Overview
The record gives the reactivity of an RNA of 177 nucleotides to 2A3 and DMS. Reactivities are rounded to 0.1 and cut off at 0 and 3. 2A3 adducts were read by reverse transcription with SuperScript II with manganese. For 2A3, 722 sequencing reads were counted.

RNA sequence: GGGAACGACUCGAGUAGAGUCGAAAAUGAUGAUAUGGAAAUUGCUUUCUUGAAUUCUCAUUCAAAAGCUGAAAUUGUUGAUAUGCUUCGUAAACAUACAUAUAUUGAUGAGCUUGAACAAAGCAAGGUUCCAUUUUGUAUUCGUACAAAAUGGAACAAAAGAAACAACAACAACAAC
Reactivity to 2A3 in 0.01 (KOAc 150mM, MgCl2 10mM, bicine 150mM(pH8.5), 24C), signal-to-noise 1, nucleotides 027 to 126: u120g030a040u020g000a000u050a060u220g050g140a030a100a060u110u080g000c000u020u020u050c030u060u030g060a010a020u160u000c130u060c040a040u120u020c030a000a000a000a170g000c030u040g030a080a080a030u090u070g080u060u060g050a070u060a030u120g000c020u040u140c000g120u110a000a000a100c010a010u100a040c020a040u150a050u010a040u080u100g080a130u030g050a030g040c030u050u000g090a070a050c060a110a020a000g030c030a020a020g060
Reactivity to DMS in 0.01 (KOAc 150mM, MgCl2 10mM, bicine 150mM(pH8.5), 24C), signal-to-noise 3, nucleotides 027 to 126: u000g010a100u000g010a070u010a110u000g020g010a070a100a120u000u000g000c080u000u000u000c100u000u000g030a050a070u010u000c100u010c080a120u010u000c040a030a040a050a040g010c020u000g010a100a070a040u000u000g000u000u020g000a120u000a010u000g000c030u000u010c300g000u010a130a060a070c030a040u000a030c020a040u000a070u010a020u000u010g010a220u010g010a060g030c060u000u000g010a120a100c150a040a030a040g000c040a070a080g010